[RMDB]
RNA sequence: GGGAACGACUCGAGUAGAGUCGAAAAUCUUCGAAGGACUGGUCCAGCCGUUGAGGUUAACAUCUCUGAAGUUUCUAAACCUCACGCAUACGAAUAUAAAGAUAGUGUGAGCUUUGAGGCUAAAUCAGUACUACCAGUGAUUCGUCACUGGUAGUACAAAAGAAACAACAACAACAAC
Reactivity to DMS in 0.01 (KOAc 150mM, MgCl2 10mM, bicine 150mM(pH8.5), 24C), signal-to-noise 3, nucleotides 027 to 126: u000c020u000u000c030g010a090a080g010g000a060c050u000g000g010u000c060c060a080g010c050c020g050u020u000g010a060g020g020u010u030a060a100c160a110u010c030u000c040u000g000a120a070g020u000u000u000c040u000a030a040a030c150c000u000c000a020c090g020c050a050u010a020c110g000a070a100u020a210u030a120a060a150g000a090u010a080g000u000g000u000g000a020g010c170u000u000u000g020a040g010g040c020u000a030a120a060u000c100a050
Reactivity to 2A3 in 0.01 (KOAc 150mM, MgCl2 10mM, bicine 150mM(pH8.5), 24C), signal-to-noise 2, nucleotides 027 to 126: u030c010u100u040c030g040a060a020g080g000a070c060u070g040g000u040c010c030a040g000c020c010g050u020u110g010a010g020g000u020u000a010a020c030a080u040c040u010c030u130g100a060a020g010u010u060u000c050u070a060a050a020c000c000u000c010a000c010g000c020a050u060a150c030g060a190a000u190a010u120a240a170a010g090a020u100a040g030u030g000u000g010a010g000c000u070u040u020g030a010g000g000c010u030a040a090a040u120c050a050
The record gives the reactivity of an RNA of 177 nucleotides to DMS and 2A3. 2A3 adducts were read by reverse transcription with SuperScript II with manganese. Values cover nucleotides 27 to 126.